[RMDB]
RNA sequence: GGGAACGACUCGAGUAGAGUCGAAAAGACUGUCAGCCAUGUCGGCGGGACAGGCACCACCAUGCAUCUGGCGCUUGAACUGCCCAACAUGGUCGAUCGCCAUUCUUACCUGGUGAUGGAGCCGUCCUCGAGUUUCUACAUUCGUGUAGAAACUCGAAAAAGAAACAACAACAACAAC
Reactivity to 2A3 in 0.01 (KOAc 150mM, MgCl2 10mM, bicine 150mM(pH8.5), 24C), signal-to-noise 1, nucleotides 027 to 126: g010a010c030u060g030u180c030a000g000c010c000a000u020g040u020c020g020g000c000g000g020g000a010c000a020g010g000c000a010c000c000a020c000c060a170u290g050c020a130u080c100u070g000g000c030g000c010u000u030g010a040a010c010u010g000c020c020c010a020a040c000a020u030g010g020u050c030g030a030u060c010g000c020c000a070u150u070c080u110u120a150c010c060u010g040g010u060g010a050u060g050g040a020g000c010c010g030u050c000c000
Reactivity to DMS in 0.01 (KOAc 150mM, MgCl2 10mM, bicine 150mM(pH8.5), 24C), signal-to-noise 3, nucleotides 027 to 126: g000a060c020u010g000u000c030a110g020c020c000a030u000g020u010c300g000g010c030g010g010g010a260c020a010g020g010c000a040c010c020a030c160c100a080u000g000c260a080u000c140u000g010g020c050g010c000u000u000g020a030a270c020u000g010c040c010c090a060a010c020a000u000g000g000u000c020g000a030u000c110g000c000c010a070u000u020c130u030u010a140c220c170u000g010g020u000g000a060u000g010g010a040g020c000c010g010u000c050c010
Structure probing data (2A3 and DMS) for a 177-nucleotide construct. It was measured as part of the RMDB library OK2TRN. Reactivities are given for positions 27 through 126.